[RMDB]
RNA sequence: GGGAACGACUCGAGUAGAGUCGAAAAGAUAUGGAUCUAGGGAGAUCCACAUCGGAAACGAUGUGAAGAUCGAAGAACUAGGGAGUCCUAAGUCAAAGUAAGACGAAAGUUCGCUUUCGUCUUACAACAUAUAGACGGACUUCGGUCCGUCUAUAUGAAAAGAAACAACAACAACAAC
Reactivity to 2A3 in 0.01 (KOAc 150mM, MgCl2 10mM, bicine 150mM(pH8.5), 24C), signal-to-noise 4, nucleotides 027 to 126: g000a000u020a010u050g000g000a010u050c000u000a010g000g030g000a020g000a000u000c010c000a010c000a010u010c000g010g020a000a000a010c000g000a000u000g010u010g070a190a100g020a010u020c010g290a300a010g000a010a000c000u010a000g060g070g070a050g050u000c000c010u000a000a010g000u000c040a100a020a160g000u010a000a000g000a000c010g010a000a000a000g020u080u180c280g050c160u000u000u000c010g000u000c000u010u000a000c000a010a000
Reactivity to DMS in 0.01 (KOAc 150mM, MgCl2 10mM, bicine 150mM(pH8.5), 24C), signal-to-noise 5, nucleotides 027 to 126: g010a010u000a030u000g000g000a010u000c000u000a010g000g000g000a030g010a010u010c010c000a010c000a000u000c010g020g000a010a010a030c000g010a000u000g010u000g010a100a140g000a010u000c000g000a120a140g010a110a200c010u000a010g000g000g010a140g010u000c000c010u000a010a110g010u000c010a100a090a150g000u000a000a000g010a010c010g000a010a010a000g010u000u010c270g010c000u000u000u000c000g010u000c000u000u000a000c000a090a170